[RMDB]
RNA sequence: GGGAACGACUCGAGUAGAGUCGAAAACGCUGGGCAAGAGCUAACAGAGCUGAUGACCCACAUGAAGAAGUACUGAAGCGCGCACGGUAUGUAAAGUGUGGCAAGGCUCUGGACCCUCUUGCCUGUGCUGAAGCGCGCACGGCAACCGAAAGGUGCGGAGAAUAGUACGGUUCGCCGUACUAUUCUCAAAAGAAACAACAACAACAAC
Reactivity to DMS in 0.01 (KOAc 150mM, MgCl2 10mM, bicine 150mM(pH8.5), 24C), signal-to-noise 2, nucleotides 027 to 156: c060g020c000u000g060g010g020c000a060a020g010a030g010c010u010a080a300c030a040g020a070g030c000u020g020a190u010g030a120c300c010c010a040c000a060u010g000a060a160g000a240a300g000u010a020c050u000g000a000a030g030c000g030c020g000c000a300c040g000g000u000a010u000g010u000a050a170a300g000u010g000u000g000g040c010a010a020g000g050c020u000c010u000g020g000a070c160c140c030u000c010u000u000g020c030c010u010g010u010g000c000u000g010a080a000g030c000g000c040g080c000a300c050g010g000c030a120a200c030c010g030a020a080a180g000g000u010g020c030g000
Reactivity to 2A3 in 0.01 (KOAc 150mM, MgCl2 10mM, bicine 150mM(pH8.5), 24C), signal-to-noise 4, nucleotides 027 to 156: c050g010c040u100g000g000g000c000a000a000g000a000g020c010u010a030a010c000a000g000a000g000c010u050g040a300u180g040a150c000c010c000a000c000a000u030g000a050a300g020a010a000g010u010a000c000u020g050a260a060g010c010g000c000g010c000a010c010g000g000u000a000u040g010u010a050a000a010g000u000g000u000g000g000c080a050a030g000g010c000u000c000u000g000g000a010c000c000c000u000c000u000u000g000c000c000u010g000u000g000c000u030g010a130a050g000c000g000c000g000c000a010c010g000g000c010a040a050c000c020g060a070a050a030g030g010u060g030c060g060

Overview: Structure probing data (DMS and 2A3) for a 207-nucleotide construct. The 2A3 profile rests on 8,724 reads. Reactivities are rounded to 0.1 and cut off at 0 and 3. Reactivities are given for positions 27 through 156. DMS adducts were read by reverse transcription with MarathonRT.